[RMDB]
RNA sequence: GGGAACGACUCGAGUAGAGUCGAAAAACGUCGCCGGCAUAUGUACGCAUACGCCGGCGACGAAGGCCUUCUGGUGAUGUUUCUGGCCACCCAGGAGGUCUUGAGGAAGAGGUGGACGGCCAGACAAAAAAGUCUUCUAACUUCGGUUAGAAGACAACUACAAUUAAGUCUUCGGACUUAAUUGUAGAAAAGAAACAACAACAACAAC
Reactivity to 2A3 in 0.01 (KOAc 150mM, MgCl2 10mM, bicine 150mM(pH8.5), 24C), signal-to-noise 2, nucleotides 027 to 156: a000c000g000u010c000g010c000c000g020g040c000a030u000a010u040g030u060a040c230g020c100a040u040a010c010g020c040c020g020g020c000g000a000c000g000a000a000g000g000c010c000u010u000c000u000g020g010u120g080a190u080g100u040u190u030c000u010g000g020c000c000a000c010c000c000a000g020g000a010g020g000u000c010u030u070g040a010g030g050a060a040g010a030g050g060u120g070g050a070c050g010g000c000c000a000g000a000c060a010a150a010a000a010a000g000u000c000u000u000c000u000a000a000c000u030u100c270g070g000u000u000a000g000a000a000g000a000c000a000a000